[RMDB]
RNA sequence: GGGAACGACUCGAGUAGAGUCGAAAAGUGUGGAUGGAGUGAGAGGAGGAGUCCUGUGUAUGUCGUUGUCAACGUCGACCGAGCGUCCGUGCCAAGCGCUGCGUCACCAGGGGAUGACUGUCGGAAGAUGGUCAGUCCCGGGUGCAUAAGGAGUGGUGAAUAAUCGGUACUUCGGUACCGAUUAUUCAAAAGAAACAACAACAACAAC
Reactivity to DMS in 0.01 (KOAc 150mM, MgCl2 10mM, bicine 150mM(pH8.5), 24C), signal-to-noise 1, nucleotides 027 to 156: g030u000g010u000g000g020a090u000g010g010a060g020u010g010a140g040a130g050g000a080g020g020a140g000u000c030c030u000g000u010g050u000a080u010g050u000c010g010u040u000g060u000c040a080a020c070g000u000c050g000a070c020c020g040a120g050c050g030u000c040c040g000u020g010c050c010a060a080g000c040g030c020u010g020c000g020u010c000a020c020c000a010g030g000g020g020a180u000g050a000c030u000g030u000c010g060g050a110a240g010a030u000g020g000u000c000a030g020u000c000c010c010g020g040g050u000g020c020a080u000a100a090g000g000a220g010u020g020g010u000
Reactivity to 2A3 in 0.01 (KOAc 150mM, MgCl2 10mM, bicine 150mM(pH8.5), 24C), signal-to-noise 3, nucleotides 027 to 156: g090u070g010u040g020g040a060u050g020g040a050g030u100g020a060g000a020g030g010a010g000g020a010g030u050c010c010u040g000u030g010u060a080u110g030u010c040g010u020u050g080u080c050a050a020c090g050u050c050g050a060c030c000g030a030g030c040g030u060c040c010g030u060g030c020c030a090a030g010c030g030c040u060g010c020g080u140c010a000c000c000a030g000g010g000g000a000u010g000a000c000u010g000u000c000g000g080a050a070g000a050u020g020g030u000c010a010g090u020c000c000c010g010g000g000u000g000c010a050u060a070a020g060g000a050g020u060g020g070u040
Structure probing data (DMS and 2A3) for a 207-nucleotide construct. Values cover nucleotides 27 to 156. High DMS reactivity at an A or C suggests that its Watson-Crick edge is free. The RNA was probed in 150 mM KOAc, 10 mM MgCl2 and 150 mM bicine (pH 8.5) at 24 C.